RNA sequence: GGGAACGACUCGAGUAGAGUCGAAAAGAUAUGGAAGAUCGGGCACAGCAACAGCCUAUCUCGGAAACGAGAGUAGGACAUGCUGGAUCGAUCUUCCUAAGUCAAAAGUCAUGCUUCGGCAUGACAAGACUCUUUUCAUGUUCGCAUGAAAAGAGUCAAAAGAAACAACAACAACAAC
Reactivity to DMS in 0.01 (KOAc 150mM, MgCl2 10mM, bicine 150mM(pH8.5), 24C), signal-to-noise 4, nucleotides 027 to 126: g000a050u000a300u000g010g010a000a000g010a010u000c000g020g000g020c200a160c000a010g010c000a030a110c190a160g010c000c000u000a010u000c000u010c000g000g000a090a060a240c010g000a010g000a060g020u000a000g010g000a010c110a120u010g020c000u000g000g000a120u010c010g000a000u000c000u000u010c000c010u010a010a070g000u000c050a070a040a120a150g000u000c000a010u000g010c010u000u010c260g030g010c000a000u000g000a000c010a070a070
Reactivity to 2A3 in 0.01 (KOAc 150mM, MgCl2 10mM, bicine 150mM(pH8.5), 24C), signal-to-noise 4, nucleotides 027 to 126: g020a020u080a030u130g000g000a000a000g000a010u000c020g010g030g010c300a040c000a240g000c010a010a140c020a200g020c000c000u000a020u020c000u000c000g020g030a080a060a030c020g000a010g010a030g180u090a010g000g020a040c020a100u100g000c010u010g020g000a010u020c000g000a000u000c000u000u020c000c000u000a010a010g020u010c020a000a010a060a130g010u000c000a000u010g010c000u100u090c300g150g000c000a010u010g000a000c000a000a000

Chemical mapping of a 177-nucleotide RNA with DMS and 2A3. The data come from the RNA Mapping Database (RMDB), library TTRDEL. The reactions ran in a buffer of 150 mM KOAc, 10 mM MgCl2 and 150 mM bicine (pH 8.5), at 24 C.